Structure probing data (DMS and 2A3) for a 207-nucleotide construct. The DMS profile rests on 2,767 reads. For 2A3, 4,358 sequencing reads were counted. Values cover nucleotides 27 to 156.

[RMDB]
RNA sequence: GGGAACGACUCGAGUAGAGUCGAAAAUCGAGUUCACGAGAGUACACGUGUGUGAGUACACACGAUCUCACACGAACACGAACACGUACUCACGAUCGUACACGAUCUCUCGAUCGUGAUCGUGAGAUCGUGAACGAGAGUUCUCACGAGUGAGAGAGUAAUCGACUUACUUCGGUAAGUCGAUUACAAAAGAAACAACAACAACAAC
Reactivity to DMS in 0.01 (KOAc 150mM, MgCl2 10mM, bicine 150mM(pH8.5), 24C), signal-to-noise 2, nucleotides 027 to 156: u000c000g010a150g020u000u000c030a040c000g010a130g010a100g040u010a060c070a190c030g000u000g000u000g040u010g020a230g000u000a100c050a120c030a070c060g000a080u000c000u000c010a030c060a080c090g010a090a080c040a150c050g000a080a170c050a050c050g010u020a160c120u000c000a050c020g000a060u000c010g050u000a120c090a080c080g000a020u000c000u000c020u000c160g030a020u000c090g010u010g000a050u000c000g040u000g010a070g000a000u000c000g020u000g000a080a090c000g010a160g000a080g020u000u000c000u000c020a050c120g020a190g020u010g000a020g000a160g020a230
Reactivity to 2A3 in 0.01 (KOAc 150mM, MgCl2 10mM, bicine 150mM(pH8.5), 24C), signal-to-noise 5, nucleotides 027 to 156: u030c010g000a020g010u020u020c020a020c060g030a030g000a020g080u080a030c090a020c080g050u050g000u000g000u010g080a080g140u280a010c080a010c030a030c090g050a090u010c000u010c000a010c000a000c020g070a150a020c070a010c070g040a080a030c050a010c160g030u070a040c010u000c000a020c000g020a030u030c040g020u110a030c040a000c060g010a020u000c040u000c020u040c100g010a010u010c040g050u120g070a030u000c000g000u010g000a010g010a030u000c000g000u000g000a010a000c010g000a010g000a010g040u030u000c010u010c000a070c060g050a070g070u110g030a030g020a010g010a030